[RMDB]
RNA sequence: GGGAACGACUCGAGUAGAGUCGAAAAAAAGACCCCGGGACCUUUACUACAGUUUGAUAUUGGUGUUCGGUUCGGCUUGUGUAGGAUAGCUGGGAGACUUUGAUCAUCGGACGCCAGUUCGGUGUGAGCUGUAUGAAAUAUUCGUAUUUCAUACAGCAAAAGAAACAACAACAACAAC
Reactivity to DMS in 0.01 (KOAc 150mM, MgCl2 10mM, bicine 150mM(pH8.5), 24C), signal-to-noise 4, nucleotides 027 to 126: a090a070a140g000a220c030c020c010c040g020g020g000a040c050c030u000u010u010a050c050u000a050c060a060g010u000u000u010g010a070u020a040u000u000g010g010u010g010u000u000c020g010g010u000u000c050g020g000c030u000u000g010u000g020u000a080g000g010a080u000a050g010c030u010g000g000g010a130g000a080c080u000u020u010g010a140u000c010a020u000c010g020g000a010c020g000c090c110a080g010u000u000c010g010g010u000g000u010g000a150
Reactivity to 2A3 in 0.01 (KOAc 150mM, MgCl2 10mM, bicine 150mM(pH8.5), 24C), signal-to-noise 3, nucleotides 027 to 126: a030a010a010g110a040c060c020c010c020g040g060g010a060c100c000u220u170u180a080c050u070a020c020a060g060u060u120u180g200a080u100a060u170u080g020g000u040g090u120u090c050g000g000u020u060c020g030g010c010u080u080g050u020g060u120a060g030g090a090u040a050g020c020u030g020g050g020a090g050a040c050u140u090u130g060a070u080c020a010u010c010g000g020a010c010g020c070c020a010g010u020u010c000g000g000u000g000u010g050a020
About this RNA: An RNA of 177 nucleotides, treated with DMS and 2A3 and read out base by base. For DMS the reverse transcriptase was MarathonRT. The data come from the RNA Mapping Database (RMDB), library OK2TRN. For 2A3 the reverse transcriptase was SuperScript II with manganese. Values cover nucleotides 27 to 126. The RNA was probed in 150 mM KOAc, 10 mM MgCl2 and 150 mM bicine (pH 8.5) at 24 C.